The record gives the reactivity of an RNA of 207 nucleotides to DMS and 2A3. For DMS, 2,945 sequencing reads were counted. Conditions: 150 mM KOAc, 10 mM MgCl2 and 150 mM bicine (pH 8.5), 24 C. It was measured as part of the RMDB library RNAMAK.

RNA sequence: GGGAACGACUCGAGUAGAGUCGAAAACGCUGGGAUGCGGCAAAGUUGGACGAAGCCUAUCGAGUACUGAAGCGCGCACGGUACUAAGACAGUAGGUGUUAGGGAGAAACUUUGCCACAUCCUGUGCUGAAGCGCGCACGGCAACCGAAAGGUGCGACCACUUUAUAAUGUUCGCAUUAUAAAGUGGAAAAGAAACAACAACAACAAC
Reactivity to DMS in 0.01 (KOAc 150mM, MgCl2 10mM, bicine 150mM(pH8.5), 24C), signal-to-noise 2, nucleotides 027 to 156: c050g080c060u000g000g010g000a010u000g030c020g000g030c010a010a040a070g010u010u000g010g010a170c110g000a110a300g000c000c010u000a060u000c030g030a030g010u000a030c020u000g000a010a060g000c000g060c050g000c020a300c000g010g000u010a010c000u000a160a120g000a270c300a100g010u000a020g050g040u000g040u040u000a080g020g000g020a280g030a210a040a000c000u000u000u000g000c000c000a020c000a020u000c000c010u000g020u000g060c010u000g000a070a050g040c000g010c000g000c010a300c030g010g030c020a060a100c070c020g000a040a160a170g000g040u000g010c000g000a230
Reactivity to 2A3 in 0.01 (KOAc 150mM, MgCl2 10mM, bicine 150mM(pH8.5), 24C), signal-to-noise 8, nucleotides 027 to 156: c030g010c020u020g000g000g010a010u010g000c010g000g020c010a000a000a010g030u140u100g180g090a070c040g050a050a010g020c000c000u040a050u150c080g060a010g000u000a000c000u020g050a250a050g010c000g000c000g000c010a010c020g000g010u010a000c010u050a060a140g080a100c100a080g030u020a000g010g010u080g120u300u130a070g020g080g040a110g150a070a050a000c000u020u000u000g000c000c000a000c000a000u000c000c000u000g000u020g000c010u030g020a090a040g000c000g000c000g000c010a000c010g040g010c020a070a070c010c000g040a090a050a010g030g000u020g010c010g010a050